[RMDB]
RNA sequence: GGGAACGACUCGAGUAGAGUCGAAAAGAUAUGGAUGUAUUACCGAGCCUUCAUAUCGGAAACGAUAUGAGGCGAUGAGGUACGGUACAUCCUAAGUCAAACCGACUAUCGUUCGCGAUAGUCGGAAGUAAAUUGGAUCGUUCGCGAUCCAAUUUACAAAAGAAACAACAACAACAAC
Reactivity to DMS in 0.01 (KOAc 150mM, MgCl2 10mM, bicine 150mM(pH8.5), 24C), signal-to-noise 2, nucleotides 027 to 126: g000a030u000a050u000g010g000a000u000g010u000a000u010u000a000c000c010g000a060g010c020c000u000u000c010a000u000a000u000c010g020g000a010a000a020c010g000a010u000a010u010g010a070g000g020c010g040a050u010g000a240g000g010u000a010c300g030g040u000a010c000a010u000c000c000u000a000a090g000u000c000a080a130a220c010c000g000a020c000u000a010u000c000g010u010u010c260g040c010g000a020u000a000g000u000c000g000g010a000a040
Reactivity to 2A3 in 0.01 (KOAc 150mM, MgCl2 10mM, bicine 150mM(pH8.5), 24C), signal-to-noise 2, nucleotides 027 to 126: g030a010u020a010u080g010g020a000u000g010u000a020u020u020a030c050c060g040a040g000c010c000u260u300c020a020u000a000u010c010g000g030a010a000a000c020g010a000u010a000u010g000a010g020g020c010g010a040u140g020a020g000g000u030a060c140g050g000u000a000c010a010u000c000c000u010a030a000g050u000c030a090a050a140c000c000g000a000c000u010a000u020c010g070u100u090c300g000c000g200a000u000a010g030u000c020g020g000a000a000